[RMDB]
Overview
Structure probing data (DMS) for a 177-nucleotide construct. The DMS profile rests on 1,620 reads. DMS adducts were read by reverse transcription with MarathonRT. The RNA was probed in 150 mM KOAc, 10 mM MgCl2 and 150 mM bicine (pH 8.5) at 24 C.
RNA sequence: GGGAACGACUCGAGUAGAGUCGAAAAUCCUUUCGCUGCUGGCUCCACAUCCGAUCGUCGCUGAAGCGUCGCGCCCCCUCGCCCGGAGCUUCUCUCUGGCUACUACCCGGUGGAUACAACUGAAGCUGAAUGGUAGAAAGUUCGCUUUCUACCAUUCAAAAGAAACAACAACAACAAC
Reactivity to DMS in 0.01 (KOAc 150mM, MgCl2 10mM, bicine 150mM(pH8.5), 24C), signal-to-noise 2, nucleotides 027 to 126: u000c010c000u000u000u000c090g040c050u000g030c050u000g020g010c030u000c020c030a080c070a080u010c060c060g000a120u000c050g010u000c050g020c020u000g000a120a120g000c040g020u000c040g020c130g000c000c020c030c010c030u010c050g000c050c030c030g000g020a110g010c100u010u000c040u000c020u000c050u000g010g000c030u000a040c080u000a110c040c010c020g000g040u000g000g010a060u010a060c050a050a050c100u000g000a100a130g010c130u010